[RMDB]
An RNA of 177 nucleotides, treated with DMS and 2A3 and read out base by base. The RNA was probed in 150 mM KOAc, 10 mM MgCl2 and 150 mM bicine (pH 8.5) at 24 C.

RNA sequence: GGGAACGACUCGAGUAGAGUCGAAAAUUGGGCUAAGUCCACUGCAGUCGCUGUGGGACACUGAGGCAGAGCUGUCCGGCAGGCAUUGGACAGACAGCCUGAGCCCCCCACAAGGAGCACAGGGCUCGCGGGUGCAUAUAUUCGUAUAUGCACCCGCAAAAGAAACAACAACAACAAC
Reactivity to DMS in 0.01 (KOAc 150mM, MgCl2 10mM, bicine 150mM(pH8.5), 24C), signal-to-noise 1, nucleotides 027 to 126: u000u000g070g010g020c020u000a100a190g000u000c000c020a060c100u000g000c010a170g000u010c260g010c050u000g020u000g020g000g000a050c070a100c090u010g000a060g040g040c070a100g000a050g020c130u000g010u000c000c000g020g000c030a080g030g000c110a040u000u000g030g020a010c020a030g020a040c200a070g010c040c000u010g010a050g060c070c000c000c000c020c010a070c140a090a130g000g000a060g010c030a150c150a070g030g010g000c050u000c040
Reactivity to 2A3 in 0.01 (KOAc 150mM, MgCl2 10mM, bicine 150mM(pH8.5), 24C), signal-to-noise 1, nucleotides 027 to 126: u040u010g000g010g030c030u050a160a050g010u000c010c000a010c050u050g000c020a140g150u210c070g000c090u060g000u080g080g010g010a000c000a010c080u050g090a060g080g090c040a040g080a050g080c110u000g000u040c000c030g040g020c020a020g120g000c030a060u000u220g030g000a010c000a010g000a020c080a010g020c000c000u000g010a070g000c000c000c000c000c020c000a030c050a040a080g110g020a050g030c020a010c100a190g080g100g000c010u030c060
The 2A3 profile rests on 1,063 reads. For 2A3 the reverse transcriptase was SuperScript II with manganese.